[RMDB]
RNA sequence: GGGAACGACUCGAGUAGAGUCGAAAAUAAGCUGACCAGUUAUGAGGUCAUACAUCGUCAUAGCACUAAGAAGAGAGAUCUUCGAGGACAGAGAUGUCCAAGACGACGAGAACAUCGUCGUCGAUACGAUCUGGACGAAUUUCGAUUUGUCUAGAUCAAAAGAAACAACAACAACAAC
Reactivity to 2A3 in 0.01 (KOAc 150mM, MgCl2 10mM, bicine 150mM(pH8.5), 24C), signal-to-noise 9, nucleotides 027 to 126: u130a020a010g080c040u020g010a000c000c000a010g000u010u010a020u020g010a010g010g000u000c020a000u130a050c050a090u110c080g080u000c000a000u010a010g000c000a010c050u080a070a030g000a010a000g010a000g000a000g010a030u000c000u010u010c010g030a080g000g000a000c000a000g040a000g010a030u020g000u000c000c000a010a020g000a000c000g000a000c000g010a010g030a070a070c090a160u010c000g000u000c000g000u000c010g000a010u050a060c110
Reactivity to DMS in 0.01 (KOAc 150mM, MgCl2 10mM, bicine 150mM(pH8.5), 24C), signal-to-noise 9, nucleotides 027 to 126: u050a080a120g010c140u010g010a030c010c000a150g000u000u010a030u010g010a040g000g000u010c020a060u030a090c190a060u030c120g010u000c010a030u000a030g020c010a160c240u030a080a130g000a010a010g000a010g000a170g000a110u000c010u000u000c010g000a130g000g000a020c010a020g000a170g000a100u000g000u000c010c020a100a100g010a000c000g010a010c010g010a010g000a110a090c210a080u000c000g000u000c000g010u000c000g000a060u050a040c170